[RMDB]
RNA sequence: GGGAACGACUCGAGUAGAGUCGAAAACAGGCCGCCAUUCUGUCUGGUGAGACCUCCUCCCAGGUUCAGGAUUUGCUCCUCCUUGACGUCACCCCCCUGUCUCUCGGUCUUGAGACUGCUGGCGGUGCGUUCCGUUAUAGUUCGCUAUAACGGAACGAAAAGAAACAACAACAACAAC
Reactivity to 2A3 in 0.01 (KOAc 150mM, MgCl2 10mM, bicine 150mM(pH8.5), 24C), signal-to-noise 2, nucleotides 027 to 126: c010a020g070g010c000c000g000c010c000a050u160u120c040u060g040u000c010u040g150g040u180g070a040g020a090c000c000u000c000c000u000c000c020c000a020g070g040u060u070c040a020g030g020a070u090u070u220g070c000u030c010c000u020c000c000u040u050g050a050c030g060u110c040a100c000c010c000c000c000c000u000g050u040c020u010c000u030c060g040g030u000c020u040u040g010a010g000a020c010u000g010c020u010g010g000c010g000g000u010g000
Reactivity to DMS in 0.01 (KOAc 150mM, MgCl2 10mM, bicine 150mM(pH8.5), 24C), signal-to-noise 5, nucleotides 027 to 126: c110a140g020g010c020c010g010c020c040a040u010u010c060u010g000u000c060u010g010g020u010g010a070g010a060c040c070u010c070c030u000c010c010c020a120g010g000u010u000c090a050g020g000a090u000u010u010g010c060u000c050c070u000c030c010u000u010g020a060c050g000u010c080a170c020c000c020c000c010c020u010g010u000c030u000c050u010c120g010g000u000c070u000u000g000a060g010a030c020u010g020c300u000g000g010c080g010g010u010g010